[RMDB]
RNA sequence: GGGAACGACUCGAGUAGAGUCGAAAAUACUACGCGAUGUACACGCAGAUCGCCGUCGACGCGGCGCGCCUCGUGCCGCUCUACGGGCUCGCGGGCUUCACCGUCGGCACGAUCGGCGCGGUGCCGACAUCGGGUACGUGUUCGCACGUACCCGAUGAAAAGAAACAACAACAACAAC
Reactivity to DMS in 0.01 (KOAc 150mM, MgCl2 10mM, bicine 150mM(pH8.5), 24C), signal-to-noise 6, nucleotides 027 to 126: u020a140c070u010a070c110g020c020g010a050u000g020u010a100c120a080c110g000c110a120g000a090u000c050g030c040c090g010u000c050g010a050c150g010c020g020g000c020g000c070g000c040c020u000c030g020u000g000c000c010g020c200u000c040u000a070c210g010g000g000c020u000c070g010c130g010g010g010c050u000u000c110a080c180c070g010u000c010g010g010c010a020c010g010a020u010c140g010g010c030g010c020g010g000u000g000c010c020g000a080
Reactivity to 2A3 in 0.01 (KOAc 150mM, MgCl2 10mM, bicine 150mM(pH8.5), 24C), signal-to-noise 1, nucleotides 027 to 126: u120a010c060u030a040c070g030c020g060a030u070g090u160a050c150a030c130g060c040a020g030a130u050c030g020c040c020g050u030c010g030a070c060g000c020g050g020c010g000c000g000c010c010u060c030g000u010g000c000c010g030c040u000c010u020a040c040g010g020g020c000u000c030g030c100g030g010g000c000u180u220c070a070c060c040g040u060c000g010g000c000a000c010g030a060u120c090g000g000c020g020c010g010g110u000g010c000c000g040a020
Structure probing data (DMS and 2A3) for a 177-nucleotide construct. It was measured as part of the RMDB library OK2TRN. The 2A3 profile rests on 5,941 reads. For 2A3 the reverse transcriptase was SuperScript II with manganese.